[RMDB]
RNA sequence: GGGAACGACUCGAGUAGAGUCGAAAAGGUCACUGGUUCGCCAGUGACCAAAGGCGGGAGAGAGAGAAGCCACUCACCGAUAGGACUCAGCGAAGCACCCAAAAACUACCUGGUUCGCCAGGUAGAAGACUUAUGAAUGAUUCGUCAUUCAUAAGUCAAAAGAAACAACAACAACAAC
Reactivity to DMS in 0.01 (KOAc 150mM, MgCl2 10mM, bicine 150mM(pH8.5), 24C), signal-to-noise 6, nucleotides 027 to 126: g020g010u000c000a000c000u000g000g010u000u020c240g040c000c000a000g010u000g000a000c010c000a000a010a050g010g010c050g000g000g000a050g000a050g000a080g000a290g010a120a100g000c030c030a080c030u010c030a140c030c020g010a070u010a120g010g000a050c030u000c030a090g010c020g010a040a060g010c070a250c010c000c020a050a040a070a140a130c000u000a000c000c000u000g010g000u000u010c260g010c000c000a000g000g010u010a000g000a060a070
Reactivity to 2A3 in 0.01 (KOAc 150mM, MgCl2 10mM, bicine 150mM(pH8.5), 24C), signal-to-noise 5, nucleotides 027 to 126: g000g000u000c000a000c010u010g020g020u030u040c080g070c050c000a000g000u010g010a000c000c000a010a010a000g040g000c010g010g040g000a100g000a000g000a000g010a010g040a180a040g130c030c010a030c010u010c010a070c000c010g020a020u050a060g120g020a020c010u010c030a010g030c010g040a060a010g000c020a060c010c000c000a030a070a010a030a030c000u000a000c000c000u000g000g020u030u040c150g040c060c000a000g000g000u000a000g000a000a000